RNA sequence: GGGAACGACUCGAGUAGAGUCGAAAAUAUCUAUCUUUCAAAUCUUGAAGUUCUUCUUCAGAUGGACGUUUACCAUGUCUAAUAUCUGUAUAAUAUGGCUCUAUGUCACUUUCUUUAUAAGGUGUGCUGUUUAUAGAAGAUUCGUCUUCUAUAAACAAAAAGAAACAACAACAACAAC
Reactivity to DMS in 0.01 (KOAc 150mM, MgCl2 10mM, bicine 150mM(pH8.5), 24C), signal-to-noise 6, nucleotides 027 to 126: u010a060u000c040u000a060u010c030u000u010u010c090a080a150a100u010c060u010u010g020a040a050g010u000u010c170u000u010c030u010u000c010a040g010a040u000g000g020a030c050g020u000u000u010a120c110c080a060u010g010u000c030u000a080a100u000a060u000c040u000g000u010a050u010a040a060u010a070u000g000g010c030u000c090u010a070u010g000u010c020a030c080u000u000u000c090u010u010u010a070u000a060a040g010g010u000g010u000g010c130
Reactivity to 2A3 in 0.01 (KOAc 150mM, MgCl2 10mM, bicine 150mM(pH8.5), 24C), signal-to-noise 6, nucleotides 027 to 126: u120a060u020c040u030a080u020c020u030u200u080c070a140a170a120u040c030u100u170g030a020a010g030u100u060c020u220u030c000u010u030c020a010g000a020u020g030g010a000c010g010u030u070u070a080c020c020a040u050g030u000c020u040a130a090u040a100u170c030u040g070u080a050u030a200a120u120a060u080g030g010c000u000c020u060a070u140g090u050c010a010c020u060u120u080c030u030u250u050a270u090a200a020g030g010u030g030u030g070c030